[RMDB]
RNA sequence: GGGAACGACUCGAGUAGAGUCGAAAAGACCGUUUGCUCAAUGGAACCUAAACGCGGCACUCGUACAGCCGAUUGGUAACCAAGUGUAUAUAAGAGCAACGCGGGAGGAGCAACUACAAUCGGUUGAAGAGACAGACCUGUUCGCAGGUUUGUCUCUAAAAGAAACAACAACAACAAC
Reactivity to DMS in 0.01 (KOAc 150mM, MgCl2 10mM, bicine 150mM(pH8.5), 24C), signal-to-noise 7, nucleotides 027 to 126: g010a150c020c010g010u000u000u000g010c020u000c010a190a100u050g000g000a200a110c000c010u010a020a110a150c160g010c010g000g010c020a130c090u020c160g000u030a110c170a060g010c000c000g000a070u020u000g000g010u000a060a100c080c050a050a120g000u010g010u020a090u010a090u020a100a090g010a030g010c040a040a080c110g010c030g000g010g020a060g000g000a050g020c020a030a020c070u000a050c140a050a060u030c060g010g010u000u000g000a140
Reactivity to 2A3 in 0.01 (KOAc 150mM, MgCl2 10mM, bicine 150mM(pH8.5), 24C), signal-to-noise 4, nucleotides 027 to 126: g080a010c000c010g010u010u020u010g020c010u000c010a030a080u040g030g010a020a010c000c010u060a030a040a030c120g010c000g030g000c020a020c030u090c050g090u090a060c010a010g010c000c000g010a010u000u020g020g010u030a020a030c000c000a050a030g040u010g110u050a060u020a020u010a170a070g000a000g010c020a010a020c050g000c020g020g000g010a010g000g000a020g020c030a010a030c010u100a040c040a080a080u050c020g000g000u000u020g010a050